This 177-nucleotide RNA was probed chemically with DMS.
[RMDB]
RNA sequence: GGGAACGACUCGAGUAGAGUCGAAAAGCGCACGCUGCGCGCGAGGCGCGCGCGGAUCUCGUCGGCGGUCUCGCGGCCGCGCGUGGCGAGGCGCUCGGCGAGCACAUGCGGCGCGGCGUCGAUAUGACACCAUCACGAUCUUCGGAUCGUGAUGGUGAAAAGAAACAACAACAACAAC
Reactivity to DMS in 0.01 (KOAc 150mM, MgCl2 10mM, bicine 150mM(pH8.5), 24C), signal-to-noise 1, nucleotides 027 to 126: g010c010g000c040a100c030g020c040u000g020c000g070c010g030c000g020a160g030g020c140g010c010g010c020g070c130g040g020a100u000c000u000c010g010u000c020g010g020c090g010g010u010c010u000c040g010c090g020g010c000c030g030c100g030c070g030u000g000g000c000g010a040g000g000c040g000c030u020c030g020g000c020g000a090g000c140a100c190a150u000g000c000g020g010c030g010c030g070g000c030g000u000c000g000a130u000a110u010g000a210

It was measured as part of the RMDB library OK2TRN.